[RMDB]
An RNA of 177 nucleotides, treated with DMS and 2A3 and read out base by base. The RNA was probed in 150 mM KOAc, 10 mM MgCl2 and 150 mM bicine (pH 8.5) at 24 C. The data come from the RNA Mapping Database (RMDB), libraries RFM100 and RFMREP. High DMS reactivity at an A or C suggests that its Watson-Crick edge is free.
RNA sequence: GGGAACGACUCGAGUAGAGUCGAAAAUUGUGAAAAGACAUAUCGGGUGUAGAAUAGGUGGGAGCUUCGGCGCCGGUGAAAUACCACUACCUUUAUUGUUUUUUUACUUAUUCAAUGAAGCGGAACUCAAGUAGUGUUAUUUCGAUAACACUACUUGAAAAGAAACAACAACAACAAC
Reactivity to DMS in 0.01 (KOAc 150mM, MgCl2 10mM, bicine 150mM(pH8.5), 24C), signal-to-noise 4, nucleotides 027 to 126: u050u010g010u010g000a020a020a020a030g010a040c010a040u000a030u000c060g020g010g030u000g010u010a040g010a140a020u010a050g000g000u000g000g000g000a030g000c020u000u000c150g030g020c050g040c210c300g010g000u000g000a010a020a110u020a080c030c010a020c020u010a020c030c000u000u000u000a010u020u020g000u000u000u000u000u000u010u000a040c040u010u000a080u000u000c100a070a090u020g000a060a070g030c070g010g010a100a090c160u010
Reactivity to 2A3 in 0.01 (KOAc 150mM, MgCl2 10mM, bicine 150mM(pH8.5), 24C), signal-to-noise 9, nucleotides 027 to 126: u090u050g010u010g020a010a020a010a010g040a010c010a010u080a020u050c030g010g040g010u110g040u090a060g080a250a100u060a060g060g020u050g010g020g010a070g020c020u030u050c120g100g000c010g000c020c000g030g000u060g040a030a040a020u110a020c000c010a010c020u040a050c010c000u020u030u020a050u050u050g020u000u000u000u000u000u010u020a030c030u060u090a100u110u070c070a050a130u120g060a060a010g050c050g060g050a050a030c020u000